[RMDB]
RNA sequence: GGGAACGACUCGAGUAGAGUCGAAAACUUGGACGAUGAUGGCGUGAUCCUUUGCGCCUACAACAAUACUCGCCGCCGCUUGAACGCCAGGGCGCGCCGCAUCCUCGGCUACAAGGGUUUACAACCGCGGUGGCUAAAUUUUCGAAUUUAGCCACCGAAAAGAAACAACAACAACAAC
Reactivity to DMS in 0.01 (KOAc 150mM, MgCl2 10mM, bicine 150mM(pH8.5), 24C), signal-to-noise 1, nucleotides 027 to 126: c070u000u000g040g020a050c050g040a040u000g010a180u000g010g020c000g030u000g020a150u010c080c050u000u000u000g010c000g000c040c010u000a090c070a040a130c140a090a100u010a060c060u010c080g000c020c000g010c020c020g010c110u010u010g000a020a150c160g000c040c160a040g010g000g010c020g000c020g040c110c100g000c100a040u000c030c040u000c080g020g000c040u020a050c100a050a070g010g000g000u010u000u010a110c140a040a140c070c070g000